[RMDB]
RNA sequence: GGGAACGACUCGAGUAGAGUCGAAAAGUAAUCCCAGCUACUCAGGAGGCUGAAGCAGGAGAAUUGAACCUGGGAGGCGGAUGUUGCAGUGAGCUGAGAUCGCCCCAUUGCACUCCAGUCUGGGUGACAGGGUUAUAUGCUUCGGCAUAUAACCCUGAAAAGAAACAACAACAACAAC
Reactivity to 2A3 in 0.01 (KOAc 150mM, MgCl2 10mM, bicine 150mM(pH8.5), 24C), signal-to-noise 1, nucleotides 027 to 126: g110u050a070a050u030c000c040c040a000g000c050u040a040c010u020c020a020g050g010a080g160g000c020u070g050a050a020g130c010a020g020g090a090g070a220a240u150u200g070a090a110c010c000u050g090g020g020a060g000g040c060g060g030a060u050g130u250u090g020c000a000g010u000g030a000g040c000u010g040a010g050a200u210c060g000c000c000c010c000a020u090u000g020c080a090c090u030c010c000a030g100u000c020u020g000g040g020u020g060a020
Reactivity to DMS in 0.01 (KOAc 150mM, MgCl2 10mM, bicine 150mM(pH8.5), 24C), signal-to-noise 2, nucleotides 027 to 126: g020u000a130a120u010c000c000c000a130g020c040u000a060c040u000c100a030g030g010a160g020g010c030u000g000a090a220g010c040a020g000g010a110g000a130a130u010u000g000a120a080c020c010u010g000g020g010a180g040g010c040g010g000a010u010g010u010u020g010c000a030g050u000g010a210g010c030u020g010a120g000a110u010c080g000c030c000c030c070a030u010u010g010c030a030c020u000c020c040a130g000u000c070u000g000g000g000u000g010a120